[RMDB]
RNA sequence: GGGAACGACUCGAGUAGAGUCGAAAAUUGGAUUCACGCACGACACAGCAGUUAACAAUCGAAGUCUUAGUGACUGUCGAUGGUGUAAAUUUUAGAACAGUCGUUCUAAAUAAUAAGAACACUUAUAUGGCGGAGCACUUCGGUGCUCCGAAAAGAAACAACAACAACAAC
Reactivity to 2A3 in 0.01 (KOAc 150mM, MgCl2 10mM, bicine 150mM(pH8.5), 24C), signal-to-noise 5, nucleotides 027 to 129: u080u030g090g060a020u040u050c000a000c040g010c010a010c030g030a000c000a000c010a040g020c010a030g040u060u090a140a070c060a050a030u010c000g030a020a000g030u000c000u040u120a130g060u080g110a010c000u050g130u010c000g000a040u030g000g030u020g000u000a060a150a060u030u050u010u030a000g010a030a010c010a050g160u130c130g000u130u000c000u010a000a000a030u110a010a000u070a030a050g060a060a010c010a000c030u110u030a060u050a060u270g030g010
Reactivity to DMS in 0.01 (KOAc 150mM, MgCl2 10mM, bicine 150mM(pH8.5), 24C), signal-to-noise 4, nucleotides 027 to 129: u020u080g050g000a000u030u040c080a000c090g000c040a110c040g010a070c040a030c100a110g060c050a000g030u000u000a070a080c150a140a040u040c020g050a080a010g020u010c020u000u000a190g030u030g040a030c030u040g040u010c020g000a010u060g000g060u050g040u000a000a080a210u050u020u020u000a020g000a030a000c000a120g050u030c190g000u020u010c030u030a030a010a020u060a080a070u110a050a110g000a080a030c040a060c000u030u090a070u070a000u080g020g040

Notes
Chemical mapping of a 170-nucleotide RNA with 2A3 and DMS. The RNA was probed in 150 mM KOAc, 10 mM MgCl2 and 150 mM bicine (pH 8.5) at 24 C. It was measured as part of the RMDB library 15KLIB. The DMS profile rests on 10,751 reads.